Background: Structure probing data (2A3) for a 177-nucleotide construct. For 2A3, 343 sequencing reads were counted. It was measured as part of the RMDB library OK1LIB. The reactions ran in a buffer of 150 mM KOAc, 10 mM MgCl2 and 150 mM bicine (pH 8.5), at 24 C.
RNA sequence: GGGAACGACUCGAGUAGAGUCGAAAAGCUCUUUCCUCAUGGGGAUAUGGGGCGUAAUCACGGGAAUUAUGGAGCCACAUUGAAUCGAAUGCAAUUAGCUGUUGGAGCUCUUUUUGCCGCUGGUUCAUAGUGGGGCGUCAUUCGUGACGCCCCACUAAAAAGAAACAACAACAACAAC
Reactivity to 2A3 in 0.01 (KOAc 150mM, MgCl2 10mM, bicine 150mM(pH8.5), 24C), signal-to-noise 1, nucleotides 027 to 126: g020c000u010c000u090u140u040c040c000u000c020a240u200g070g000g050g000a000u090a130u090g080g000g000g060c000g020u000a040a020u180c080a040c000g090g020g170a070a110u080u130a080u090g020g020a000g030c000c040a000c000a000u030u130g000a080a060u040c210g000a090a050u300g000c000a000a000u010u020a100g000c010u030g010u250u020g220g020a000g020c000u060c060u000u010u000u000u000g000c010c120g050c060u000g020g010u000u000c000a000